[RMDB]
RNA sequence: GGGAACGACUCGAGUAGAGUCGAAAAGAGUCCUAUUUCGAUAGGACUCAACUAAAAUCAGCGGUAAAUAAUUAGCUGGCGUUACCGCUGAACGCCAGGAUACUAGCCUCGUCUUCGGACGAGGCAACUAAAGCUGUCUGUUCGCAGACAGCUUUAGAAAAGAAACAACAACAACAAC
Reactivity to 2A3 in 0.01 (KOAc 150mM, MgCl2 10mM, bicine 150mM(pH8.5), 24C), signal-to-noise 2, nucleotides 027 to 126: g000a000g010u000c000c000u000a030u050u090u060c180g110a010u020a000g000g050a000c000u000c000a000a000c010u110a020a010a010a060u030c000a000g010c000g180g280u260a140a070a040u140a070a150u270u130a060g130c000u010g000g020c000g010u010u020a150c010c010g000c010u000g000a000a000c000g000c000c000a010g000g030a040u110a260c140u140a050g010c000c000u010c010g010u000c020u040u070c230g040g010a000c000g000a000g000g020c010a000a000
Reactivity to DMS in 0.01 (KOAc 150mM, MgCl2 10mM, bicine 150mM(pH8.5), 24C), signal-to-noise 1, nucleotides 027 to 126: g000a020g020u000c000c000u000a000u010u010u010c200g050a020u000a000g000g010a010c000u000c010a030a130c120u020a040a020a090a110u010c010a010g000c000g040g000u050a030a030a040u010a090a090u020u000a150g000c020u000g000g000c040g030u000u000a070c010c000g000c000u000g010a010a020c010g020c000c020a010g000g000a160u020a080c270u000a110g010c000c000u010c000g020u000c000u000u020c300g010g010a010c010g010a010g010g010c000a000a030